[RMDB]
RNA sequence: GGGAACGACUCGAGUAGAGUCGAAAACGUCGCAGCACGUGCUGAUGACGAAGGCUUCAUCACAUUAAAGAACAAUCUAUAUAGAUUGGUUUGGCAUGUUGAGCGUAAAGACGUUCCAUAUCCUAAGUAGCGAGUGUGUUCGCACACUCGAAAAGAAACAACAACAACAAC
Reactivity to 2A3 in 0.01 (KOAc 150mM, MgCl2 10mM, bicine 150mM(pH8.5), 24C), signal-to-noise 9, nucleotides 027 to 129: c000g010u010c010g000c010a010g010c000a030c220g120u240g000c030u010g010a170u070g020a000c020g040a090a040g080g000c020u070u030c040a080u060c010a010c010a080u130u190a150a050a010g050a020a010c000a000a000u000c010u020a100u030a070u160a270g000a010u010u040g070g060u050u050u040g010g000c030a010u020g000u030u100g050a030g020c040g020u070a030a070a040g040a020c000g010u020u000c000c000a050u030a080u110c020c030u070a120a050g040u040a050g160
Reactivity to DMS in 0.01 (KOAc 150mM, MgCl2 10mM, bicine 150mM(pH8.5), 24C), signal-to-noise 7, nucleotides 027 to 129: c000g000u000c000g040c040a040g000c020a170c300g030u060g040c030u000g040a070u000g000a000c040g030a100a030g030g000c060u010u010c040a080u030c070a060c050a030u000u000a090a210a120g040a040a060c000a010a000u000c000u010a190u060a010u080a020g020a030u010u020g000g000u020u000u000g040g000c220a000u000g010u000u000g010a000g000c080g030u060a100a090a080g020a110c030g030u020u000c040c040a070u020a010u040c060c060u000a070a070g020u050a120g040
Source: RMDB library 15KLIB, as collected in RNAgym.
The record gives the reactivity of an RNA of 170 nucleotides to 2A3 and DMS.
DMS adducts were read by reverse transcription with MarathonRT.
Values cover nucleotides 27 to 129.
The reactions ran in a buffer of 150 mM KOAc, 10 mM MgCl2 and 150 mM bicine (pH 8.5), at 24 C.
For 2A3 the reverse transcriptase was SuperScript II with manganese.